[RMDB]
RNA sequence: GGGAACGACUCGAGUAGAGUCGAAAAGAUAUGGACAGUUACUCGGACGAAGAACUCGGAAACGAGGGAGUCCAGUACUGCUGUCCUAAGUCGAACGGGGAGCAAUGGUUCGCCAUUGCUCCCCGAAGGUUACAGCUAGGUUCGCCUAGCUGUAACCAAAAGAAACAACAACAACAAC
Reactivity to DMS in 0.01 (KOAc 150mM, MgCl2 10mM, bicine 150mM(pH8.5), 24C), signal-to-noise 1, nucleotides 027 to 126: g000a040u020a300u000g000g020a010c010a020g000u000u010a040c000u000c170g090g000a020c000g020a100a160g020a060a150c000u010c000g000g000a140a070a220c000g000a010g000g000g000a070g010u000c030c000a000g030u000a030c300u000g020c010u030g000u000c040c010u000a050a210g020u000c010g000a060a120c000g000g000g000g000a050g080c040a000a000u000g020g000u000u000c280g030c010c000a030u030u000g000c040u000c000c020c000c000g000a000a010
This 177-nucleotide RNA was probed chemically with DMS. The RNA was probed in 150 mM KOAc, 10 mM MgCl2 and 150 mM bicine (pH 8.5) at 24 C. It was measured as part of the RMDB library TTRDEL. For DMS the reverse transcriptase was MarathonRT.